[RMDB]
RNA sequence: GGGAACGACUCGAGUAGAGUCGAAAACCUAUCCAAAAUGAGAUCCCUUCUUGCACACUGUGCUAAUUUGAGAUUCUCAUGCCUCCUACUUGGAGAGAUCUGGACUAGAAGUCAGGGCAUCUGACUCAAUACAUUCGUCAGUUCGCUGACGAAUGAACUAGUGGACAAUCUUCGGAUUGUCCACUAGAAAAGAAACAACAACAACAAC
Reactivity to 2A3 in 0.01 (KOAc 150mM, MgCl2 10mM, bicine 150mM(pH8.5), 24C), signal-to-noise 5, nucleotides 027 to 156: c010c000u000a040u050c010c000a050a050a000a070u010g000a000g000a000u010c020c010c000u010u080c040u030u030g000c010a030c040a080c150u240g020u010g020c050u120a070a120u040u030u100g090a120g010a060u280u060c000u000c000a000u040g040c000c000u010c000c010u110a290c090u150u260g000g000a020g000a010g000a050u040c060u080g010g000a010c030u050a060g050a140a000g070u000c010a000g020g050g170c080a130u090c080u010g000a010c010u000c050a020a050u070a120c010a000u000u000c000g000u000c000a000g020u020u130c190g010c150u000g000a010c000g000a000a000u000g020a010a010
Reactivity to DMS in 0.01 (KOAc 150mM, MgCl2 10mM, bicine 150mM(pH8.5), 24C), signal-to-noise 2, nucleotides 027 to 156: c020c010u000a090u010c040c010a020a040a040a120u000g000a030g000a060u010c000c010c010u000u000c100u000u000g000c030a010c010a250c110u000g050u000g030c000u000a040a080u000u000u010g000a000g000a040u000u000c020u000c000a040u000g030c050c000u000c000c000u010a130c200u010u000g010g050a100g000a100g030a070u000c070u000g020g000a120c080u000a110g020a020a080g030u000c010a050g010g030g020c250a100u000c020u000g000a010c000u000c010a060a230u010a150c000a020u020u000c020g020u000c000a020g030u000u000c300g040c030u000g010a010c010g000a020a000u000g020a070a170
Structure probing data (2A3 and DMS) for a 207-nucleotide construct. For DMS the reverse transcriptase was MarathonRT. 2A3 is a SHAPE reagent: it acylates the 2'-hydroxyl of flexible nucleotides of all four kinds. Source: RMDB library M2RFPK, as collected in RNAgym. For 2A3 the reverse transcriptase was SuperScript II with manganese. The reactions ran in a buffer of 150 mM KOAc, 10 mM MgCl2 and 150 mM bicine (pH 8.5), at 24 C.